[RMDB]
RNA sequence: GGGAACGACUCGAGUAGAGUCGAAAAUCUUUCCCUUCUCUCGUCUUCCUCGGUCAACCUCUUAAGUUCCUCUUCUUCCUCCUUGCUGAGGCUCUUCCCUCCCGCGCCCAGCUGCUUCCUCUUGUUCUCGAGGGCCUUCCUUCUUCGGUGAUCCUCCCCUUAUGAUAAAGUUCGCUUUAUCAUAAGGAAAAGAAACAACAACAACAAC
Reactivity to DMS in 0.01 (KOAc 150mM, MgCl2 10mM, bicine 150mM(pH8.5), 24C), signal-to-noise 2, nucleotides 027 to 156: u010c090u010u000u000c010c000c030u000u020c050u030c050u010c010g010u000c050u010u040c030c000u000c050g010g020u000c070a100a120c030c010u010c040u000u000a090a190g000u000u000c040c030u010c050u010u000c030u020u000c040c010u000c030c000u010u000g000c080u000g020a160g020g010c000u000c020u000u000c020c020c010u010c000c040c030g030c100g000c040c020c020a100g030c030u000g010c050u000u000c040c020u000c020u000u000g010u000u000c050u000c060g020a140g030g040g020c060c030u010u000c040c000u000u000c030u020u000c070g040g040u010g020a160u000c000c000u010c040c050
Reactivity to 2A3 in 0.01 (KOAc 150mM, MgCl2 10mM, bicine 150mM(pH8.5), 24C), signal-to-noise 3, nucleotides 027 to 156: u090c060u050u050u040c040c000c000u080u030c050u020c010u020c050g060u000c020u060u010c010c000u020c030g070g000u060c060a070a060c010c010u050c030u060u150a150a070g040u080u050c010c000u040c020u070u030c000u050u070c010c020u010c000c000u050u080g030c080u060g050a040g040g010c000u030c020u030u110c000c000c000u030c000c000c000g020c010g000c000c000c010a010g010c010u030g010c010u020u040c010c000u040c000u030u080g050u090u010c030u050c050g020a050g020g030g020c000c020u030u090c010c010u070u050c050u050u070c050g060g000u030g040a060u050c010c010u070c030c010
Record summary: An RNA of 207 nucleotides, treated with DMS and 2A3 and read out base by base. The DMS profile rests on 7,269 reads. The data come from the RNA Mapping Database (RMDB), library VIROID. 2A3 adducts were read by reverse transcription with SuperScript II with manganese. Conditions: 150 mM KOAc, 10 mM MgCl2 and 150 mM bicine (pH 8.5), 24 C.